RNA sequence: GGGAACGACUCGAGUAGAGUCGAAAAGAAUGUUUACGCGAGUAAGCCACAGGUUAGGAAUGUAUCCGGCAGGGCCGUAGAUGUAAACAUCACAGGAACCAUCUUCCAGCUUCACAACGCCAAGUGUAAUCCUAUUGGUUGAAUCUGAUCGGUUAGGCCUGUUAUAGGCAUUCGUGCCUAUAACAGGAAAAGAAACAACAACAACAAC
Reactivity to DMS in 0.01 (KOAc 150mM, MgCl2 10mM, bicine 150mM(pH8.5), 24C), signal-to-noise 3, nucleotides 027 to 156: g000a050a040u010g000u000u010u000a000c000g020c100g030a240g040u000a100a110g020c020c010a100c050a140g020g030u010u010a060g020g000a070a100u000g010u000a140u000c010c000g030g000c040a220g020g020g000c000c030g000u000a030g000a080u000g010u000a030a050a060c040a040u000c020a130c060a130g010g000a090a080c030c020a060u000c070u010u000c070c030a140g020c060u000u000c040a080c080a070a090c070g020c040c020a080a070g020u000g020u000a060a110u000c060c040u010a140u000u000g000g030u000u000g010a040a100u000c020u010g000a120u000c080g010g010u000u010a120g030g020
Reactivity to 2A3 in 0.01 (KOAc 150mM, MgCl2 10mM, bicine 150mM(pH8.5), 24C), signal-to-noise 3, nucleotides 027 to 156: g070a030a030u050g000u010u010u020a000c030g040c000g020a040g060u070a070a050g020c010c040a040c010a050g000g150u100u140a060g060g100a100a100u130g020u110a120u090c040c000g000g000c040a070g010g070g000c020c010g040u060a050g030a160u070g020u080a050a030a010c010a020u040c030a030c020a020g110g050a050a070c040c000a050u010c010u090u000c030c020a040g010c020u060u090c040a030c020a150a090c110g040c000c010a020a020g030u020g030u120a070a110u070c010c010u030a090u090u130g020g030u060u070g020a020a030u000c020u000g020a070u090c020g060g000u030u080a040g050g040